[RMDB]
RNA sequence: GGGAACGACUCGAGUAGAGUCGAAAAAGGAAAGAAGGACGCGAGACGGUGAACCUGUGAGUGGAAACCCGCUUUAUUCACUGGGGUCGACAACUCUGGGGAGAAAAGGGCGGAUCGGAUGGGAAGAUCAACAUGAGGAGUUCGCUCCUCAUGUUGAAAAAGAAACAACAACAACAAC
Reactivity to DMS in 0.01 (KOAc 150mM, MgCl2 10mM, bicine 150mM(pH8.5), 24C), signal-to-noise 1, nucleotides 027 to 126: a100g000g000a070a050a120g000a110a050g000g000a060c130g010c100g060a030g010a100c100g010g020u000g030a100a160c100c030u000g010u000g000a050g030u000g000g000a070a100a060c080c010c010g020c100u000u000u000a090u050u000c160a040c070u000g010g020g000g010u000c060g000a120c170a010a050c030u000c010u000g010g000g000g010a030g000a050a040a030a070g000g010g000c040g030g010a070u020c070g030g000a030u000g000g010g000a030a100g010a120